[RMDB]
Chemical mapping of a 207-nucleotide RNA with 2A3 and DMS. The reactions ran in a buffer of 150 mM KOAc, 10 mM MgCl2 and 150 mM bicine (pH 8.5), at 24 C. In probing experiments dimethyl sulfate is read out at A N1 and C N3, which are open when not base-paired. It was measured as part of the RMDB library M2RFPK.
RNA sequence: GGGAACGACUCGAGUAGAGUCGAAAAGCCGCGGCAAGUGGAGUUAGCGAGAAGAGACUAGGCUUUGGUGUCUUCAAGUGAAGCGGUCACCAAUCAGGUGUGGUAGUUACCGUAAAAAAUCCGGAUUAAUGCCUCAGCGCGUUCGCGCGCUGAGGAACGUUAAUGGUGUGUUCGCACACCAUUAACGAAAAGAAACAACAACAACAAC
Reactivity to 2A3 in 0.01 (KOAc 150mM, MgCl2 10mM, bicine 150mM(pH8.5), 24C), signal-to-noise 2, nucleotides 027 to 156: g100c030c000g000c000g050g020c080a100a100g040u100g090g080a100g020u160u130a020g080c040g040a040g020a120a010g020a020g010a030c020u040a070g070g120c000u170u180u140g000g000u050g010u050c030u020u020c040a090a040g010u020g090a050a030g010c020g000g050u030c000a010c020c000a020a110u120c070a050g080g020u030g050u040g080g010u010a040g010u040u110a060c000c000g040u030a170a180a000a000a000a000u040c030c000g020g030a080u130u140a170a080u180g030c000c000u000c000a000g010c000g000c010g000u040u030c140g000c000g000c000g000c040u000g000a020g000g000a000a000
Reactivity to DMS in 0.01 (KOAc 150mM, MgCl2 10mM, bicine 150mM(pH8.5), 24C), signal-to-noise 1, nucleotides 027 to 156: g030c000c030g120c060g020g060c000a040a130g010u000g000g010a040g010u000u010a240g040c030g050a300g000a040a080g000a090g010a110c050u010a110g010g030c170u000u000u020g000g010u010g020u000c040u000u020c040a030a290g080u010g000a100a110g000c080g030g050u020c050a080c060c010a020a090u010c090a140g000g030u000g020u030g000g040u000a100g000u010u010a070c060c000g000u020a000a010a100a070a060a120u010c020c030g020g110a170u010u000a080a130u010g000c000c020u000c000a020g030c010g040c000g050u000u020c240g000c010g060c030g020c020u010g000a030g000g010a000a000